[RMDB]
RNA sequence: GGGAACGACUCGAGUAGAGUCGAAAAGAUAUGGAUCCCGUGGCUAGACGCACCGUUUAUCACAUCACAUCGGAAACGAUGUGAUGUGAUAAACGGUGGCGUCUUGGACCCAUAGGGAUCCUAAGUCCACGUAAAGACACUUCGGUGUCUUUACGUGAAAAGAAACAACAACAACAAC
Reactivity to DMS in 0.01 (KOAc 150mM, MgCl2 10mM, bicine 150mM(pH8.5), 24C), signal-to-noise 2, nucleotides 027 to 126: g020a120u010a300u000g010g000a020u000c010c000c000g000u000g000g020c060u000a010g000a010c000g010c000a050c000c000g000u000u010u000a010u000c010a020c000a020u010c000a010c000a000u000c010g000g010a180a140a230c000g020a020u000g050u000g000a010u000g010u010g000a000u000a010a000a000c000g020g020u000g010g040c000g030u000c000u010u010g030g010a140c300c010c010a020u000a120g050g000g000a010u010c000c000u000a020a090g020u000c010